[RMDB]
RNA sequence: GGGAACGACUCGAGUAGAGUCGAAAACCCGACGCCUGGCGGAGAAUCAGGGUUCGACUCCGGAGAGCGGGCCUGCGAGACGGCCCGCACAUCCAAGGACGGCAGCAGGCGCGGAACUUGCCCAAUGCAUACACGAGCUAUUCGUAGCUCGUGUAUGAAAAGAAACAACAACAACAAC
Reactivity to DMS in 0.01 (KOAc 150mM, MgCl2 10mM, bicine 150mM(pH8.5), 24C), signal-to-noise 4, nucleotides 027 to 126: c160c000c000g020a080c040g000c000c000u010g010g020c040g010g010a110g010a120a110u030c080a140g020g030g020u010u010c040g000a140c080u000c030c050g020g000a040g000a070g020c020g000g000g000c000c000u010g010c280g000a210g030a180c140g010g000c020c000c020g020c030a010c130a090u010c000c000a140a110g000g000a070c080g000g000c060a160g000c000a030g000g010c000g020c010g000g000a070a030c090u000u030g000c010c000c000a120a100u080g000
Reactivity to 2A3 in 0.01 (KOAc 150mM, MgCl2 10mM, bicine 150mM(pH8.5), 24C), signal-to-noise 6, nucleotides 027 to 126: c010c000c000g020a120c000g000c020c010u080g120g160c070g050g090a080g110a140a150u170c090a130g060g040g080u090u110c020g030a040c030u020c040c000g000g010a030g000a010g010c000g010g000g000c000c000u040g010c060g030a060g030a060c130g020g000c000c000c000g000c000a000c010a010u000c010c000a010a030g030g020a050c010g020g000c020a020g040c000a000g010g000c000g000c010g020g010a010a040c020u080u240g030c000c000c000a010a070u190g030

The record gives the reactivity of an RNA of 177 nucleotides to DMS and 2A3. 2A3 is a SHAPE reagent: it acylates the 2'-hydroxyl of flexible nucleotides of all four kinds. It was measured as part of the RMDB libraries RFM100 and RFMREP. For 2A3, 6,793 sequencing reads were counted. The reactions ran in a buffer of 150 mM KOAc, 10 mM MgCl2 and 150 mM bicine (pH 8.5), at 24 C.